[RMDB]
RNA sequence: GGGAACGACUCGAGUAGAGUCGAAAAAGGCAACCGCGCACGCGGGGAAAUGGGCUAUGCGCUGCUUCGUGGCCCCUGGACCUGGGGAGAUAAUGCGGACGCAGGCGCUACGGAGCCAGAUCAGGACCGACGAUUCGAAUUUCGAUUCGAAUCGUCGAAAAGAAACAACAACAACAAC
Reactivity to DMS in 0.01 (KOAc 150mM, MgCl2 10mM, bicine 150mM(pH8.5), 24C), signal-to-noise 1, nucleotides 027 to 126: a120g020g010c080a210a080c010c020g050c010g010c300a090c230g010c020g000g000g000g000a030a110a180u000g000g000g000c000u000a060u010g000c040g020c020u000g000c010u000u000c030g000u000g000g010c000c030c000c030u000g010g010a120c270c080u000g000g010g000g000a120g000a120u030a030a050u000g040c010g000g010a060c200g030c010a060g030g010c090g010c020u000a010c100g000g040a220g020c030c070a100g000a140u000c070a090g020g000a160c210

Overview:
The record gives the reactivity of an RNA of 177 nucleotides to DMS. Reactivities are given for positions 27 through 126. Source: RMDB library OK2TRN, as collected in RNAgym. For DMS, 693 sequencing reads were counted.